Chemical mapping of a 177-nucleotide RNA with DMS and 2A3. DMS adducts were read by reverse transcription with MarathonRT. The 2A3 profile rests on 12,153 reads. The RNA was probed in 150 mM KOAc, 10 mM MgCl2 and 150 mM bicine (pH 8.5) at 24 C. High 2A3 reactivity points to a flexible backbone, as in loops and unpaired stretches.

RNA sequence: GGGAACGACUCGAGUAGAGUCGAAAAUUAAAUACAGCACAAUAUAUGAUCGCGUAUGCGAGAGUAGUGCCAACAUAUUGUGCUAAUGAGUGCCUCUCGUUCUAUGUCUUAUAUUACCGCAAACCCAAGCGUAAUAAAAUUUCGAUUUUAUUACGCUAAAAGAAACAACAACAACAAC
Reactivity to DMS in 0.01 (KOAc 150mM, MgCl2 10mM, bicine 150mM(pH8.5), 24C), signal-to-noise 9, nucleotides 027 to 126: u010u000a070a080a100u000a120c160a050g010c010a010c010a010a020u000a030u000a060u010g000a200u000c050g020c010g010u000a080u020g030c000g000a030g010a250g020u000a070g020u000g010c080c080a070a090c110a060u000a010u000u000g010u000g010c010u000a090a070u000g000a080g010u000g010c040c010u000c040u000c040g010u000u000c060u010a040u000g000u000c030u000u000a080u010a090u010u000a090c070c060g010c110a070a090a120c020c010c020a110
Reactivity to 2A3 in 0.01 (KOAc 150mM, MgCl2 10mM, bicine 150mM(pH8.5), 24C), signal-to-noise 7, nucleotides 027 to 126: u060u010a030a030a050u180a080c120a020g000c000a000c000a030a000u010a000u020a020u100g090a070u060c020g000c060g130u280a080u300g010c010g000a030g010a010g060u080a020g030u040g090c030c000a050a030c020a050u040a020u020u030g000u010g000c010u040a020a070u130g040a020g060u070g020c000c000u020c010u010c010g040u060u000c030u040a050u060g030u000c000u030u060a070u020a030u190u080a070c030c040g020c050a050a060a100c010c000c010a020